[RMDB]
RNA sequence: GGGAACGACUCGAGUAGAGUCGAAAAGGGCCGGUGAAGCGCGACGCGGCGCUGUGUCUGGCGGUAUUGCGGGUUGGCGCUGACCCGGAAGGCGUGCCGGGCCUAAGGCAUGUCGCGGGCAGGCUGGCAACAACCAUCGGUUCGCCGAUGGUUGUUGAAAAGAAACAACAACAACAAC
Reactivity to 2A3 in 0.01 (KOAc 150mM, MgCl2 10mM, bicine 150mM(pH8.5), 24C), signal-to-noise 3, nucleotides 027 to 126: g070g000g020c000c000g000g010u110g090a170a050g120c020g000c030g070a040c010g020c020g080g000c060g010c050u050g030u030g000u070c040u070g050g010c010g000g000u120a120u050u130g140c000g000g040g060u010u040g100g010c160g010c220u170g020a070c000c000c010g010g000a030a000g070g010c120g060u150g000c010c010g000g020g000c000c020u090a080a010g000g030c030a040u080g020u010c010g000c000g090g010g010c020a000g030g000c000u040g010g000
Reactivity to DMS in 0.01 (KOAc 150mM, MgCl2 10mM, bicine 150mM(pH8.5), 24C), signal-to-noise 2, nucleotides 027 to 126: g000g010g030c010c000g000g000u030g000a170a110g010c000g010c020g000a050c060g020c140g020g000c020g000c020u000g000u030g020u040c030u020g000g030c010g030g020u010a030u030u030g010c020g000g000g010u010u000g030g000c040g000c020u010g000a230c210c000c000g000g020a030a060g050g000c020g000u020g000c020c020g000g030g000c050c050u010a210a060g000g000c010a120u010g000u000c010g020c050g000g000g000c040a120g000g000c020u000g000g010